This 177-nucleotide RNA was probed chemically with DMS and 2A3. It was measured as part of the RMDB library RFM100. DMS adducts were read by reverse transcription with MarathonRT.

RNA sequence: GGGAACGACUCGAGUAGAGUCGAAAAACGUCGCUACGGCGACGACUUGCUCCAAGCGGUGACCGGUCAUGUGACCGAAGGCUAAGCAAGACGUGUACCGGGAAUCGGCCGAAGGCGGGUUUCCGAAGAUCCUCCUUAGCUUCGGCUAAGGAGGAUCAAAAGAAACAACAACAACAAC
Reactivity to DMS in 0.01 (KOAc 150mM, MgCl2 10mM, bicine 150mM(pH8.5), 24C), signal-to-noise 1, nucleotides 027 to 126: a030c040g000u000c000g000c020u000a250c130g060g060c070g000a040c000g000a000c000u000u000g010c000u000c010c050a140a020g030c000g000g010u000g000a060c210c000g000g050u000c000a210u050g090u060g000a000c000c030g000a100a030g000g060c150u010a120a010g000c010a010a000g020a170c140g000u010g000u000a150c150c000g030g000g000a030a050u000c000g000g010c120c160g030a250a160g020g030c020g000g000g010u000u000u030c030c000g030a030a120
Reactivity to 2A3 in 0.01 (KOAc 150mM, MgCl2 10mM, bicine 150mM(pH8.5), 24C), signal-to-noise 3, nucleotides 027 to 126: a000c000g000u000c010g000c020u020a030c300g110g000c000g000a000c000g020a050c010u020u090g010c010u000c090c090a080a050g020c000g180g140u120g090a110c030c000g000g000u010c040a090u200g240u300g180a040c000c000g030a040a000g080g000c000u070a010a020g010c040a070a010g010a010c100g030u060g070u080a080c120c000g000g030g000a020a020u010c020g170g000c050c010g130a180a030g000g010c040g000g000g000u000u000u040c020c000g000a060a020